[RMDB]
RNA sequence: GGGAACGACUCGAGUAGAGUCGAAAAGAUAUGGAUCGUUCUGGAGUCUUAGUGUCGGAAACGACACGAAGGACUAUGAAGGAGACGAUCCUAAGUCAAAACUUAACAAACUUCGGUUUGUUAAGAAGAAUAGAAUAUGGUUCGCCAUAUUCUAUUCAAAAGAAACAACAACAACAAC
Reactivity to DMS in 0.01 (KOAc 150mM, MgCl2 10mM, bicine 150mM(pH8.5), 24C), signal-to-noise 8, nucleotides 027 to 126: g010a020u000a040u010g000g000a010u000c000g020u000u000c000u000g000g000a010g010u000c000u000u000a250g010u000g010u000c000g020g000a020a010a040c000g010a010c000a000c000g000a100a100g010g010a010c000u000a300u010g000a170a190g000g000a030g010a030c000g010a010u000c000c000u000a000a050g000u000c010a110a080a120a180c010u000u000a000a000c000a010a000a010c000u000u010c220g030g000u000u000u000g010u000u000a000a000g000a080a090
Reactivity to 2A3 in 0.01 (KOAc 150mM, MgCl2 10mM, bicine 150mM(pH8.5), 24C), signal-to-noise 7, nucleotides 027 to 126: g000a000u010a000u050g000g000a000u010c000g000u020u000c010u020g010g010a010g000u020c040u180u170a080g000u040g010u000c000g000g010a010a000a000c000g000a000c000a000c000g000a020a020g040g000a000c010u060a300u090g000a000a010g030g010a130g040a030c010g000a000u000c010c000u000a000a010g000u000c020a020a020a120a240c010u000u000a000a000c000a010a010a000c000u050u060c150g140g000u010u000u000g000u010u010a010a000g010a020a030
Chemical mapping of a 177-nucleotide RNA with DMS and 2A3. The 2A3 profile rests on 35,437 reads. For DMS the reverse transcriptase was MarathonRT. Conditions: 150 mM KOAc, 10 mM MgCl2 and 150 mM bicine (pH 8.5), 24 C. Values cover nucleotides 27 to 126.